[RMDB]
RNA sequence: GGGAACGACUCGAGUAGAGUCGAAAAUAGCAGCCGAGAUCGCGCCCCAUGUCGCGCGCAAGCGAGCGCACAUAGGUACCCUUGGAGCAUUCCACCUCAAAUUCGGUACGGUCGGCAUCGGGAAAGAGAAAAUACGAGUAUUCGUACUCGUAUUUUCAAAAGAAACAACAACAACAAC
Reactivity to DMS in 0.01 (KOAc 150mM, MgCl2 10mM, bicine 150mM(pH8.5), 24C), signal-to-noise 9, nucleotides 027 to 126: u000a110g010c040a100g020c030c030g010a070g010a080u000c070g020c130g010c070c020c020c060a050u010g010u000c120g020c050g010c020g010c090a090a110g020c130g010a100g020c010g020c040a060c060a050u000a060g010g010u000a070c030c030c080u000u000g010g010a050g020c080a090u000u010c050c040a090c130c010u010c040a040a060a110u000u000c140g010g000u000a040c040g020g010u000c030g010g010c050a050u000c150g000g000g000a060a040a070g000a170
Reactivity to 2A3 in 0.01 (KOAc 150mM, MgCl2 10mM, bicine 150mM(pH8.5), 24C), signal-to-noise 7, nucleotides 027 to 126: u090a010g030c030a000g030c010c040g060a030g010a130u090c030g000c000g040c040c010c000c000a010u050g010u030c080g010c010g000c010g000c090a080a040g160c070g100a030g000c020g030c020a020c020a060u110a050g070g050u060a050c010c020c000u040u080g040g000a030g010c020a070u160u020c020c010a080c010c020u050c020a090a130a120u180u070c030g000g010u020a040c020g030g020u060c020g000g020c010a020u060c030g010g000g060a020a150a020g150a020